Chemical mapping of a 177-nucleotide RNA with DMS and 2A3. The RNA was probed in 150 mM KOAc, 10 mM MgCl2 and 150 mM bicine (pH 8.5) at 24 C.
RNA sequence: GGGAACGACUCGAGUAGAGUCGAAAAGAUAUGGAUGUGAGAGGCCGAUAAGCGUAGGUCGGAAACGACCUGACGCUUUUGACGGCUGGUACAUCCUAAGUCAAAGGGCGGUCUUCGGACCGCCCAAGAUCAUAUGCAUCUUCGGAUGCAUAUGAUCAAAAGAAACAACAACAACAAC
Reactivity to DMS in 0.01 (KOAc 150mM, MgCl2 10mM, bicine 150mM(pH8.5), 24C), signal-to-noise 4, nucleotides 027 to 126: g010a030u000a230u000g000g010a020u000g000u000g010a150g010a270g000g000c010c000g030a140u010a010a000g020c010g020u000a010g010g020u010c000g020g000a050a050a090c000g010a010c000c000u000g000a040c010g010c000u000u000u000u000g000a190c110g010g010c000u000g000g030u010a010c000a000u000c000c000u000a030a100g000u000c020a090a110a140g010g010g020c000g010g010u000c010u000u010c230g030g010a000c000c000g010c000c000c010a000a000
Reactivity to 2A3 in 0.01 (KOAc 150mM, MgCl2 10mM, bicine 150mM(pH8.5), 24C), signal-to-noise 2, nucleotides 027 to 126: g010a010u040a030u090g010g000a010u010g100u050g050a300g060a300g300g030c030c060g110a200u120a290a010g000c010g010u010a000g010g000u000c010g020g000a040a010a000c000g000a000c000c000u030g130a040c010g000c000u020u000u010u040g080a030c000g010g040c030u000g020g030u050a000c010a000u000c000c000u000a050a010g030u030c040a020a120a150g000g010g000c010g030g030u010c060u130u160c300g070g000a000c000c000g000c000c010c010a010a000
2A3 adducts were read by reverse transcription with SuperScript II with manganese.